Background: This 177-nucleotide RNA was probed chemically with 2A3 and DMS. Reactivities are given for positions 27 through 126. 2A3 adducts were read by reverse transcription with SuperScript II with manganese. The reactions ran in a buffer of 150 mM KOAc, 10 mM MgCl2 and 150 mM bicine (pH 8.5), at 24 C.
[RMDB]
RNA sequence: GGGAACGACUCGAGUAGAGUCGAAAACGCCGGCCAAGACAGCACAGACAGAUUGACCUAUUGGGGUGUUUCGCGAGUGUGAGAGGGAAGCGCCGCGGCCUGUAUUUCUAGACCUGCCCUUCGCCUGAAGUAAUUACCCCUUCGGGGGUAAUUACUUAAAAGAAACAACAACAACAAC
Reactivity to 2A3 in 0.01 (KOAc 150mM, MgCl2 10mM, bicine 150mM(pH8.5), 24C), signal-to-noise 2, nucleotides 027 to 126: c030g030c000c020g030g060c000c000a040a010g070a060c020a010g070c010a040c000a030g080a000c000a020g060a050u100u130g070a070c020c020u070a110u100u110g030g030g010g020u060g020u030u140u090c020g000c010g040a090g050u130g010u060g030a120g030a030g020g060g010a060a060g060c010g000c030c010g030c000g000g010c030c000u000g040u110a110u040u080u000c020u020a040g020a030c000c000u020g070c020c000c000u040u040c050g040c020c000u040g040
Reactivity to DMS in 0.01 (KOAc 150mM, MgCl2 10mM, bicine 150mM(pH8.5), 24C), signal-to-noise 1, nucleotides 027 to 126: c110g010c030c030g020g000c020c050a040a110g000a110c080a100g040c020a050c050a040g000a150c070a090g000a090u020u020g010a070c020c030u000a220u010u010g030g010g010g040u010g000u010u000u010c020g030c060g000a080g040u030g020u000g010a070g020a070g000g000g010a100a120g010c140g000c000c030g000c000g010g000c050c020u000g000u000a030u000u000u020c040u000a110g000a110c020c000u020g000c000c000c010u010u000c080g000c030c020u000g040